[RMDB]
RNA sequence: GGGAACGACUCGAGUAGAGUCGAAAAGAUAUGGAGAUCUCCCAGGACGUUGAAAUCGGAAACGAUGGAGUCCGGGACAUGAUCUCCUAAGUCAAAACCGAGCAUAUUGUUCGCAAUAUGCUCGGAAGACUUAGAUCGAGUUCGCUCGAUCUAAGUCAAAAGAAACAACAACAACAAC
Reactivity to 2A3 in 0.01 (KOAc 150mM, MgCl2 10mM, bicine 150mM(pH8.5), 24C), signal-to-noise 2, nucleotides 027 to 126: g030a020u060a030u180g000g020a000g000a000u020c030u040c000c020c100a230g030g000a010c020g150u300u070g020a060a050a000u000c000g010g040a000a090a090c020g000a000u010g000g020a010g030u000c000c000g000g000g000a030c070a150u150g010a000u000c000u000c000c010u040a110a040g060u020c020a000a010a110a160c000c010g000a010g010c000a020u010a020u010u020g060u050u150c290g000c090a000a000u000a000u000g060c010u000c000g000g000a000a010
Reactivity to DMS in 0.01 (KOAc 150mM, MgCl2 10mM, bicine 150mM(pH8.5), 24C), signal-to-noise 2, nucleotides 027 to 126: g000a080u000a300u000g010g020a030g010a000u000c000u000c000c010c000a120g040g010a020c000g010u000u010g000a080a120a020u030c000g000g000a130a090a270c000g010a000u000g000g020a110g030u010c000c000g000g000g000a040c300a010u010g000a000u000c000u010c000c000u010a010a050g000u010c020a090a100a080a150c000c000g000a010g000c000a000u000a000u000u000g000u000u000c230g010c010a030a010u000a000u000g000c000u000c000g000g000a040a050
Structure probing data (2A3 and DMS) for a 177-nucleotide construct. Conditions: 150 mM KOAc, 10 mM MgCl2 and 150 mM bicine (pH 8.5), 24 C. For 2A3 the reverse transcriptase was SuperScript II with manganese. Source: RMDB library TTRDEL, as collected in RNAgym. For DMS the reverse transcriptase was MarathonRT.